[RMDB]
The record gives the reactivity of an RNA of 207 nucleotides to 2A3 and DMS.

RNA sequence: GGGAACGACUCGAGUAGAGUCGAAAAUUGGACGAGCUAGCGCUGGGCAUAGUGUAAGACUGGUUUGUCCUGCUGGAAGAAGCUGGCGUAGAGAGGGGAUUAAGCGUCGAAGUUAUCCUGCUGGAUGAUGCGUGCGAGGAAGACACGGGGAGAGAGGUCUAUGACUACUUUUCGAAGUAGUCAUAGAAAAAGAAACAACAACAACAAC
Reactivity to 2A3 in 0.01 (KOAc 150mM, MgCl2 10mM, bicine 150mM(pH8.5), 24C), signal-to-noise 9, nucleotides 027 to 156: u130u070g020g010a010c020g010a020g000c020u030a000g010c040g010c120u070g020g080g010c090a120u150a110g100u150g040u150a070a050g050a100c020u020g030g020u040u040u040g020u010c000c020u020g000c020u040g010g040a060a060g010a030a010g030c050u040g020g010c030g040u090a000g020a000g010a020g040g010g010g010a020u080u130a070a020g020c020g030u030c040g070a060a020g010u040u040a040u070c020c020u090g090c070u110g030g020a030u060g020a020u070g050c040g020u050g020c040g010a030g010g020a020a020g010a010c030a020c100g010g000g010g000a030g010a010g010a010g010g050
Reactivity to DMS in 0.01 (KOAc 150mM, MgCl2 10mM, bicine 150mM(pH8.5), 24C), signal-to-noise 3, nucleotides 027 to 156: u010u010g020g010a070c020g010a070g000c010u000a070g040c010g040c060u000g020g000g020c060a130u000a080g030u010g010u000a090a110g020a080c010u000g030g000u000u000u000g020u010c000c030u010g010c060u010g010g030a100a080g000a060a090g030c030u010g010g010c050g030u010a080g010a120g010a110g010g000g020g010a140u000u000a070a120g020c050g000u000c040g000a100a120g010u000u000a050u000c020c030u020g010c090u020g010g010a070u000g020a050u000g010c060g020u000g000c020g020a080g010g000a110a110g010a090c070a040c050g000g010g020g010a080g000a100g010a060g030g010
For 2A3 the reverse transcriptase was SuperScript II with manganese.